RNA sequence: GGGAACGACUCGAGUAGAGUCGAAAAUCAUGAAAAUGGGGUGAUGCCUAUGGUUUUGGUUUCUACUCCAAGAAAGGAAUAGCAUGACUGAUUAUGAAAUGCUAAUGAUUGUUCUUACAAUCAUUGGAUAUUGCCGUUACUUCGGUAACGGCAAUAUAAAAGAAACAACAACAACAAC
Reactivity to 2A3 in 0.01 (KOAc 150mM, MgCl2 10mM, bicine 150mM(pH8.5), 24C), signal-to-noise 3, nucleotides 027 to 126: u010c000a020u100g030a110a000a010a050u080g000g000g000g010u060g000a030u010g010c030c020u120a140u050g140g140u140u030u140u080g000g000u000u000u020c030u070a030c000u000c000c030a000a050g130a070a100a000g130g060a090a120u030a060g000c000a020u010g000a050c000u050g090a200u090u040a170u300g120a020a180a040u050g050c010u000a010a010u010g000a000u010u000g020u160u080c110u180u300a000c000a000a000u000c000a000u010u000g050g000
Reactivity to DMS in 0.01 (KOAc 150mM, MgCl2 10mM, bicine 150mM(pH8.5), 24C), signal-to-noise 3, nucleotides 027 to 126: u000c050a100u010g010a060a040a070a070u000g020g000g020g000u010g010a080u010g010c010c000u000a060u000g010g000u000u000u020u010g000g010u000u000u000c000u010a020c070u020c000c010a060a070g010a050a090a130g020g000a120a130u010a040g000c040a020u000g030a190c060u010g000a130u040u010a090u010g000a050a140a040u000g010c000u010a010a010u000g010a010u000u000g000u000u040c240u010u030a040c000a000a010u010c000a020u010u000g010g010
Structure probing data (2A3 and DMS) for a 177-nucleotide construct. The data come from the RNA Mapping Database (RMDB), libraries RFM100 and RFMREP. The reactions ran in a buffer of 150 mM KOAc, 10 mM MgCl2 and 150 mM bicine (pH 8.5), at 24 C. Reactivities are given for positions 27 through 126.